The record gives the reactivity of an RNA of 207 nucleotides to 2A3 and DMS.
RNA sequence: GGGAACGACUCGAGUAGAGUCGAAAACAUUUACUAAGCUAUGAAGUACUUGAGAGGAGAACUGUGUCACACUCAUUCUAUACCUGAUUUCAGAACCCCACAAGUAUUUAUUAGCAUAUAACUGUGGGAUAGUCUUAUUUUUUAAGAUUCACAAAUAACUGAUGUUAACGUUCGCGUUAACAUCAGUAAAAGAAACAACAACAACAAC
Reactivity to 2A3 in 0.01 (KOAc 150mM, MgCl2 10mM, bicine 150mM(pH8.5), 24C), signal-to-noise 4, nucleotides 027 to 156: c010a020u100u190u260a150c110u220a140a030g000c000u010a000u100g080a060a020g020u020a020c030u080u050g060a090g020a080g140g010a080g040a140a050c020u000g010u020g000u050c000a050c000a000c040u090c050a130u240u020c150u170a150u080a090c050c040u040g070a060u050u230u120c050a030g000a030a070c030c000c010c000a040c020a020a020g030u020a050u040u090u010a070u030u050a000g000c020a020u060a020u010a160a030c060u040g000u000g010g030g060a080u060a050g020u000c000u000u070a120u120u200u110u040u030u010a000a000g000a030u100u120c020a050c040a060a110a020u250a140
Reactivity to DMS in 0.01 (KOAc 150mM, MgCl2 10mM, bicine 150mM(pH8.5), 24C), signal-to-noise 1, nucleotides 027 to 156: c060a090u010u000u000a150c100u000a090a180g000c020u010a040u000g020a300a110g020u000a000c050u010u020g000a130g010a110g050g030a030g030a110a170c020u000g010u000g010u010c010a030c040a080c070u010c100a110u000u000c080u000a220u010a100c090c030u000g000a010u000u020u010c000a040g000a090a300c030c000c000c000a170c050a000a070g020u000a010u010u000u000a130u020u010a030g010c040a190u000a080u000a050a020c050u020g040u000g010g030g000a060u000a060g010u000c000u010u000a020u010u000u000u000u010u000a020a020g000a040u020u020c000a040c110a020a060a100u000a090